[RMDB]
RNA sequence: GGGAACGACUCGAGUAGAGUCGAAAAGCGUCAUGCGUAGAAAUUAUUGGGGUGUUAUUAUUCAGCCCAUUCUUUUACAGAGACGCAUGACUGCAGUAGCGUUUUCUGUAAGAAAGAUCGCAUGAAAGGGAUAUACUAACUUCGGUUAGUAUAUCCCAAAAGAAACAACAACAACAAC
Reactivity to 2A3 in 0.01 (KOAc 150mM, MgCl2 10mM, bicine 150mM(pH8.5), 24C), signal-to-noise 3, nucleotides 027 to 126: g030c000g040u030c000a000u010g000c000g000u030a010g070a040a090a020u140u020a050u070u050g000g000g010g060u010g070u040u010a220u110u040a190u080u130c010a030g040c000c010c010a000u040u000c010u000u040u020u020a030c000a000g050a010g000a020c000g000c010a010u050g040a000c030u100g050c000a040g050u170a010g000c000g000u010u050u060u020c010u000g060u080a060a010g070a040a110a000g050a040u080c010g000c010a000u030g030a050a010a010
Reactivity to DMS in 0.01 (KOAc 150mM, MgCl2 10mM, bicine 150mM(pH8.5), 24C), signal-to-noise 3, nucleotides 027 to 126: g030c100g010u000c000a010u000g010c000g010u030a080g010a070a040a080u010u020a050u010u010g000g000g000g000u000g010u020u030a100u040u030a130u040u030c030a020g000c000c010c000a020u010u020c050u030u000u000u010a040c070a080g030a030g010a010c000g000c000a030u030g020a060c100u020g050c140a120g010u020a060g000c000g000u010u010u020u000c000u000g010u010a030a070g020a040a070a070g010a060u000c010g010c020a020u000g000a050a070a110
Annotation
An RNA of 177 nucleotides, treated with 2A3 and DMS and read out base by base. Conditions: 150 mM KOAc, 10 mM MgCl2 and 150 mM bicine (pH 8.5), 24 C. 2A3 adducts were read by reverse transcription with SuperScript II with manganese.